[RMDB]
RNA sequence: GGGAACGACUCGAGUAGAGUCGAAAAGAUAUGGAUCCGGCAGGACAUGCUUGACAGUCGGAAACGACUGGAGAGCAACAGCCUGGCGGAUCCUAAGUCAAAACUGUUGUCCUUCGGGACAACAGAAUCUCAUAUAGAACUUCGGUUCUAUAUGAGAAAAAGAAACAACAACAACAAC
Reactivity to DMS in 0.01 (KOAc 150mM, MgCl2 10mM, bicine 150mM(pH8.5), 24C), signal-to-noise 4, nucleotides 027 to 126: g000a030u000a080u010g000g000a010u000c000c000g000g000c000a020g010g010a020c140a160u010g010c000u010u000g010a300c010a000g010u010c010g000g000a000a030a060c000g010a000c010u000g000g000a300g000a000g010c000a050a070c210a110g000c000c000u000g000g000c000g010g000a010u000c000c000u000a000a040g000u000c010a080a100a120a220c010u000g010u000u010g030u000c000c000u000u010c260g060g000g010a010c000a010a010c010a000g000a070a070
Reactivity to 2A3 in 0.01 (KOAc 150mM, MgCl2 10mM, bicine 150mM(pH8.5), 24C), signal-to-noise 3, nucleotides 027 to 126: g020a000u020a010u060g010g000a010u010c020c020g060g180c060a000g000g030a040c130a260u300g000c000u040u010g010a010c000a010g000u010c000g010g000a040a020a010c000g000a000c000u010g020g000a040g000a000g030c020a030a060c060a020g050c000c000u020g060g040c000g000g000a000u000c000c000u000a000a000g000u010c010a000a010a150a190c020u010g000u020u000g000u000c010c020u040u100c300g140g000g000a000c010a000a000c000a010g010a000a050
The record gives the reactivity of an RNA of 177 nucleotides to DMS and 2A3.
The RNA was probed in 150 mM KOAc, 10 mM MgCl2 and 150 mM bicine (pH 8.5) at 24 C.
High 2A3 reactivity points to a flexible backbone, as in loops and unpaired stretches.
DMS adducts were read by reverse transcription with MarathonRT.
For DMS, 4,301 sequencing reads were counted.